[RMDB]
RNA sequence: GGGAACGACUCGAGUAGAGUCGAAAAGGCUCGCGGAAAACGCGAUCGGUCCAAGCAGCUACCACCCAUCAUGCAUUUUGACUAGCCGCAAAGGACUAAGUGUUGAGGUGUUGAACACGGAUGCCGACGGUCCUGAAAAUUUCGAUUUUCAGGACCGAAAAGAAACAACAACAACAAC
Reactivity to 2A3 in 0.01 (KOAc 150mM, MgCl2 10mM, bicine 150mM(pH8.5), 24C), signal-to-noise 1, nucleotides 027 to 126: g120g000c030u020c010g000c030g070g040a110a190a130a090c020g000c020g000a000u100c070g000g010u000c010c010a010a000g020c000a000g020c020u090a050c020c030a080c060c020c010a040u100c030a020u100g100c040a070u040u100u000u090g000a020c040u010a020g010c020c000g040c100a130a100a020g000g000a010c020u050a180a030g050u030g020u100u040g040a090g000g040u090g020u130u110g060a080a030c070a010c000g020g030a010u110g000c000c000g030a020
Reactivity to DMS in 0.01 (KOAc 150mM, MgCl2 10mM, bicine 150mM(pH8.5), 24C), signal-to-noise 1, nucleotides 027 to 126: g040g000c090u000c000g030c030g010g010a040a040a160a180c030g020c010g000a030u010c100g010g010u000c000c020a090a300g000c050a030g000c010u010a090c060c020a080c050c010c010a130u000c150a100u000g000c100a020u000u000u000u030g000a050c150u010a100g010c030c010g000c030a050a110a170g010g000a010c030u000a060a120g030u000g010u000u020g000a120g000g010u000g000u000u000g010a030a050c120a040c050g030g010a130u000g020c010c010g020a140
The record gives the reactivity of an RNA of 177 nucleotides to 2A3 and DMS. Reactivities are given for positions 27 through 126. For DMS the reverse transcriptase was MarathonRT. The RNA was probed in 150 mM KOAc, 10 mM MgCl2 and 150 mM bicine (pH 8.5) at 24 C. The 2A3 profile rests on 851 reads.